[RMDB]
RNA sequence: GGGAACGACUCGAGUAGAGUCGAAAAGGGCUAUGCGGCAUCUUUUGCACAGCUCCACAACGCUGCCCCAGUUGAGCGCGAUCCAGUGUCGGAUGUGGCAGACGCCAAAACAAACUUAGCAGCCUCAGAGUCGUAGUACAUUCGUGUACUACGACUCAAAAGAAACAACAACAACAAC
Reactivity to DMS in 0.01 (KOAc 150mM, MgCl2 10mM, bicine 150mM(pH8.5), 24C), signal-to-noise 2, nucleotides 027 to 126: g000g010g030c030u010a030u010g010c040g030g020c130a060u000c030u020u000u010u010g070c010a020c060a060g010c030u000c020c100a050c080a070a070c120g000c030u010g010c020c000c050c070a150g020u010u000g000a060g000c050g000c040g020a080u020c030c050a140g010u020g020u010c210g000g000a060u000g000u000g010g010c000a040g000a100c120g000c000c000a020a040a110a140c090a050a030a090c100u000u000a070g020c060a080g010c020c050u010c100a090
Reactivity to 2A3 in 0.01 (KOAc 150mM, MgCl2 10mM, bicine 150mM(pH8.5), 24C), signal-to-noise 2, nucleotides 027 to 126: g060g000g030c020u020a010u100g010c040g070g020c040a080u050c010u010u200u150u160g060c050a020c020a000g010c020u060c030c040a060c040a070a060c060g090c070u120g020c010c030c000c050a040g030u070u100g100a050g020c040g000c030g040a000u070c050c040a050g020u020g070u100c070g020g030a080u060g010u040g190g000c020a010g020a050c040g060c030c000a030a070a010a010c030a020a090a010c020u070u100a010g000c030a010g040c000c020u030c020a040
Record summary
The record gives the reactivity of an RNA of 177 nucleotides to DMS and 2A3. The RNA was probed in 150 mM KOAc, 10 mM MgCl2 and 150 mM bicine (pH 8.5) at 24 C. Values cover nucleotides 27 to 126. Source: RMDB library OK2TRN, as collected in RNAgym. For DMS, 1,349 sequencing reads were counted. For 2A3 the reverse transcriptase was SuperScript II with manganese.